[RMDB]
RNA sequence: GGGAACGACUCGAGUAGAGUCGAAAAGGCAACAUGGGCGGUGGUUUGAUUGACCAGGUUUUACCGCAAAACUGGAUCCCGAUGUUCAGCAACCACGCGGAUAUGAUGCUGACCCAAAUCGCCAUUGGGCGUCAUUAUCAUUCGUGAUAAUGACGCCAAAAGAAACAACAACAACAAC
Reactivity to DMS in 0.01 (KOAc 150mM, MgCl2 10mM, bicine 150mM(pH8.5), 24C), signal-to-noise 2, nucleotides 027 to 126: g000g030c020a030a080c010a050u000g000g030g000c120g010g010u020g020g020u000u000u000g030a140u010u000g010a070c010c030a090g010g020u000u000u000u020a110c070c110g000c160a030a040a090a070c040u010g020g000a190u000c010c050c030g010a080u000g010u010u000c000a030g000c030a050a040c020c040a000c020g060c040g010g010a170u010a040u000g000a090u000g040c010u000g000a120c030c010c020a080a070a110u000c140g000c060c120a080u010u000g020
Reactivity to 2A3 in 0.01 (KOAc 150mM, MgCl2 10mM, bicine 150mM(pH8.5), 24C), signal-to-noise 2, nucleotides 027 to 126: g040g050c000a010a000c010a070u010g070g100g050c110g020g030u040g020g060u080u070u100g180a300u070u030g010a010c020c010a000g060g010u020u060u020u130a100c080c040g000c070a040a030a000a040c070u070g010g020a090u050c000c050c000g040a070u100g090u090u030c010a030g030c020a010a020c010c020a030c000g300c000g130g050a050u020a000u090g020a030u030g020c020u010g020a000c000c020c020a040a130a010u170c100g080c090c030a150u050u140g150

Description: This 177-nucleotide RNA was probed chemically with DMS and 2A3. Conditions: 150 mM KOAc, 10 mM MgCl2 and 150 mM bicine (pH 8.5), 24 C. For DMS, 1,219 sequencing reads were counted. It was measured as part of the RMDB library OK2TST. Values cover nucleotides 27 to 126. For DMS the reverse transcriptase was MarathonRT.